[RMDB]
RNA sequence: GGGAACGACUCGAGUAGAGUCGAAAAGAUAUGGAGAACUACCACAACAGUGAAAUACAUGUGGUUCGGAAACGAACCCAUGGAGUGGCUCCUAAGUCAAACACUUUUCUGUUCGCAGAAAAGUGAACUACCCUGAUAGCUUCGGCUAUCAGGGUAGAAAAGAAACAACAACAACAAC
Reactivity to DMS in 0.01 (KOAc 150mM, MgCl2 10mM, bicine 150mM(pH8.5), 24C), signal-to-noise 1, nucleotides 027 to 126: g000a050u000a300u000g000g000a050g000a110a020c140u020a300c020c000a010c010a090a090c130a140g080u000g000a150a160a170u010a090c000a020u000g010u010g090g030u000u000c000g000g030a120a110a220c010g020a000a000c000c000c010a010u000g010g000a090g000u000g000g000c020u000c000c000u000a090a090g000u020c010a110a010a170c020a000c000u000u000u000u000c000u000g000u000u040c260g040c010a020g000a040a000a000a020g030u010g000a050a140
Reactivity to 2A3 in 0.01 (KOAc 150mM, MgCl2 10mM, bicine 150mM(pH8.5), 24C), signal-to-noise 1, nucleotides 027 to 126: g000a010u080a080u190g050g040a010g010a150a000c110u150a020c180c050a010c020a230a040c050a100g160u090g300a120a120a020u280a050c010a010u060g200u300g020g000u000u000c010g030g000a030a030a030c030g020a020a020c120c070c000a000u000g020g000a040g030u000g080g070c010u020c040c000u030a060a010g010u040c040a030a180a040c000a020c030u000u040u000u000c010u000g040u050u070c300g010c060a000g000a010a000a000a000g000u010g010a010a040

Notes
Chemical mapping of a 177-nucleotide RNA with DMS and 2A3. DMS (dimethyl sulfate) methylates the pairing face of unpaired adenines and cytosines. Conditions: 150 mM KOAc, 10 mM MgCl2 and 150 mM bicine (pH 8.5), 24 C. Source: RMDB library TTRDEL, as collected in RNAgym. For DMS, 709 sequencing reads were counted.